[RMDB]
RNA sequence: GGGAACGACUCGAGUAGAGUCGAAAAUUGGACACACUCGCCUACUGGAUUUGACCUCUGUGAAUACCAAUGCUGGCCUGGGUGUCAGUAUUUGCUAGAAGCCCCUGUGUGGGUUUGUCUUCCCUUAGCUUUAGCCAGGAAGACAUCUGGCCUCAGCAAUGGACAUUGGAUUCGUCCAAUGUCCAUUAAAAGAAACAACAACAACAAC
Reactivity to DMS in 0.01 (KOAc 150mM, MgCl2 10mM, bicine 150mM(pH8.5), 24C), signal-to-noise 1, nucleotides 027 to 156: u010u010g020g010a160c020a040c030a040c030u010c100g010c000c010u000a260c060u000g010g010a280u000u010u000g020a100c030c060u020c120u000g030u020g020a040a100u000a100c040c030a080a080u010g000c020u000g000g020c010c020u020g000g020g050u000g040u010c040a110g000u010a040u000u020u010g040c000u000a100g000a100a190g000c030c010c000c040u010g020u010g030u000g020g020g020u010u000u020g010u000c020u000u010c000c000c030u000u000a110g010c010u000u010u010a090g030c000c050a030g040g000a040a070g010a070c030a060u000c030u010g000g000c010c010u000c040a070g010c090
Reactivity to 2A3 in 0.01 (KOAc 150mM, MgCl2 10mM, bicine 150mM(pH8.5), 24C), signal-to-noise 2, nucleotides 027 to 156: u140u050g090g000a010c020a010c000a010c020u020c050g000c010c020u140a070c060u110g080g020a070u080u060u150g100a090c030c050u100c050u100g090u060g110a080a070u100a250c010c010a050a020u070g040c070u020g020g010c000c000u130g110g020g000u140g020u010c000a000g010u010a050u030u040u040g020c010u020a010g010a140a010g050c040c020c050c050u080g090u040g050u290g160g040g000u050u030u040g000u000c000u000u010c000c010c000u000u150a020g000c000u100u020u220a050g000c030c010a000g000g040a040a040g090a050c000a000u000c000u010g010g000c000c030u120c020a030g000c040